[RMDB]
RNA sequence: GGGAACGACUCGAGUAGAGUCGAAAAGAUAUGGACGAGUACAUGUUUUCAGGACCGUGCCGUGCUAUCGGAAACGAUAGACCCACGACACGGUCCUGAAAACGAACUACUAUACUCGUCCUAAGUCCCUACAUGUUACGUUCGCGUAACAUGUAGGAAAAGAAACAACAACAACAAC
Reactivity to DMS in 0.01 (KOAc 150mM, MgCl2 10mM, bicine 150mM(pH8.5), 24C), signal-to-noise 3, nucleotides 027 to 126: g010a140u000a220u000g000g000a010c020g000a030g010u010a010c170a080u000g010u000u000u000u000c010a000g010g000a010c000c000g030u000g030c010c000g030u010g010c020u000a000u000c000g010g010a170a080a280c010g010a020u000a020g000a290c290c300c090a000c000g000a020c000a000c010g000g000u000c000c010u000g000a000a000a000a010c000g000a050a080c300u000a080c290u010a150u010a000c000u000c010g000u010c000c000u000a010a130g010u010c040

Chemical mapping of a 177-nucleotide RNA with DMS.
The RNA was probed in 150 mM KOAc, 10 mM MgCl2 and 150 mM bicine (pH 8.5) at 24 C.
High DMS reactivity at an A or C suggests that its Watson-Crick edge is free.